RNA sequence: GGGAACGACUCGAGUAGAGUCGAAAAAAAUCAGUUGAAAGGGUCAUCGAGACUACUACCACAACUACAGUAACAAGUGAGCACUUUGAACAUGAAGAUGAACAUGCUCAGCUUCAUGAUACUGUUAACUCACCAAAAUAUUCGUAUUUUGGUGAGUAAAAGAAACAACAACAACAAC
Reactivity to 2A3 in 0.01 (KOAc 150mM, MgCl2 10mM, bicine 150mM(pH8.5), 24C), signal-to-noise 7, nucleotides 027 to 126: a000a000a000u140c050a020g020u040u030g040a120a080a020g040g000g010u030c020a050u180c170g060a050g010a160c020u090a180c010u070a070c090c030a050c010a070a030c010u050a010c010a020g010u030a050a040c020a070a030g030u030g070a020g030c030a020c090u100u170u150g050a050a010c010a020u060g040a050a020g080a080u110g010a050a010c040a070u110g010c010u000c010a020g020c010u040u040c030a040u040g030a040u040a030c010u010g010u060u050a030
Reactivity to DMS in 0.01 (KOAc 150mM, MgCl2 10mM, bicine 150mM(pH8.5), 24C), signal-to-noise 7, nucleotides 027 to 126: a060a060a070u000c060a030g020u000u000g000a110a100a060g000g000g010u000c020a140u000c160g010a200g010a030c020u000a060c050u000a140c040c050a140c020a020a030c030u000a060c010a020g000u000a020a060c060a020a040g010u000g000a040g020c020a080c200u000u010u010g010a040a150c030a010u000g000a100a060g000a050u010g000a050a180c100a070u000g000c040u000c000a020g010c080u000u000c100a070u000g010a090u000a020c020u000g000u000u000a060